RNA sequence: GGGAACGACUCGAGUAGAGUCGAAAAGUCCUUUGUUCUCGCUGCCUAAGCGAGCGCACUAACAGGACCGUCGACCCGGUGAUGCUCUCUAUCCGGUAAGUCGGCGUCAGAAAAGGGAGCUCGCUGCGCGGUCGUGCCUCAGGGCCGCGCGGGACUCGGAUACCAAGAAGUUCGCUUCUUGGUAUCCAAAAGAAACAACAACAACAAC
Reactivity to 2A3 in 0.01 (KOAc 150mM, MgCl2 10mM, bicine 150mM(pH8.5), 24C), signal-to-noise 2, nucleotides 027 to 156: g010u020c020c000u030u030u080g010u010u020c000u000c010g000c010u050g030c040c210u170a070a010g000c000g010a000g000c000g010c010a060c000u140a220a030c040a110g000g020a010c000c000g000u010c010g000a010c010c000c010g000g000u020g000a020u090g000c000u000c000u010c000u010a000u020c000c000g020g000u050a180a030g010u000c000g010g020c020g060u040c010a020g110a040a130a000a000g000g010g010a010g000c010u010c200g020c000u000g000c010g000c000g010g030u020c020g070u090g070c010c010u120c050a070g070g000g000c000c000g000c000g000c000g000g000g000a030c050u050c090